[RMDB]
RNA sequence: GGGAACGACUCGAGUAGAGUCGAAAAAAAGAUAUGGAGAACAUUGAGGGAGCGUGGUUCGUUUGACGAGCGUCGGAAACGACGCUCCGAGAACCACCUCCCAAUGAUGUGUUCUCCUAAGUCAAAAGCUACCAUAAUACUUCGGUAUUAUGGUAGCAAAAGAAACAACAACAACAAC
Reactivity to DMS in 0.01 (KOAc 150mM, MgCl2 10mM, bicine 150mM(pH8.5), 24C), signal-to-noise 2, nucleotides 027 to 126: a050a030a120g000a060u020a300u000g010g020a010g020a010a000c000a010u000u000g000a190g030g020g010a010g010c210g040u000g010g000u000u000c010g010u000u000u000g020a230c300g000a000g010c020g020u010c010g010g000a090a050a170c000g020a030c010g000c000u000c000c000g000a160g010a020a010c000c000a010c010c000u000c000c010c000a000a010u010g010a090u010g000u010g010u000u010c000u000c000c000u010a000a090g010u000c040a110a050a140a130
Reactivity to 2A3 in 0.01 (KOAc 150mM, MgCl2 10mM, bicine 150mM(pH8.5), 24C), signal-to-noise 1, nucleotides 027 to 126: a030a000a070g020a040u130a070u100g010g000a000g020a020a000c000a010u020u060g000a050g000g010g010a010g020c250g000u000g010g030u000u010c030g040u170u300u300g080a070c020g000a000g000c000g000u000c000g020g020a080a140a060c000g030a000c030g020c010u000c000c000g000a000g010a000a000c010c000a000c010c010u020c000c010c000a000a000u000g010a000u060g010u010g010u000u010c010u000c000c000u010a070a020g030u010c030a000a080a040a170